[RMDB]
This 177-nucleotide RNA was probed chemically with DMS and 2A3. 2A3 adducts were read by reverse transcription with SuperScript II with manganese. Source: RMDB library M2PK90, as collected in RNAgym. Values cover nucleotides 27 to 126. For DMS, 1,398 sequencing reads were counted.
RNA sequence: GGGAACGACUCGAGUAGAGUCGAAAAUAACUCCUCCCGCGAGAGCCGCUAAGGUGGAUACGCUAUGCGGUACUGCCUGAUAGGGUGCUUGCGAGUGCCGCGGGAGGUCUCGUAGAAAAUAACCUAAGCAAUACAAAAACUUCGGUUUUUGUAUUGCAAAAGAAACAACAACAACAAC
Reactivity to DMS in 0.01 (KOAc 150mM, MgCl2 10mM, bicine 150mM(pH8.5), 24C), signal-to-noise 2, nucleotides 027 to 126: u010a090a180c100u010c000c000u000c000c010c020g000c010g000a010g010a300g010c020c000g000c030u010a130a080g000g000u010g000g020a180u010a120c010g050c010u000a300u020g000c000g000g000u000a050c000u000g030c010c000u000g000a190u000a210g010g000g030u000g020c000u000u030g000c030g000a050g020u000g000c000c010g000c030g000g020g000a010g000g000u010c010u000c010g000u000a210g010a080a070a070a090u010a090a100c080c050u000a070a120
Reactivity to 2A3 in 0.01 (KOAc 150mM, MgCl2 10mM, bicine 150mM(pH8.5), 24C), signal-to-noise 1, nucleotides 027 to 126: u100a020a000c030u000c020c000u000c000c000c000g000c010g010a010g010a010g000c000c010g000c040u090a170a120g050g010u040g040g060a190u180a300c030g000c020u060a040u160g020c010g000g000u030a020c000u000g000c000c000u010g030a000u010a020g010g000g000u030g000c010u010u110g010c010g000a010g010u000g000c000c000g000c000g000g000g020a010g010g020u020c000u000c000g000u010a050g150a020a150a030a050u130a050a010c000c000u040a100a010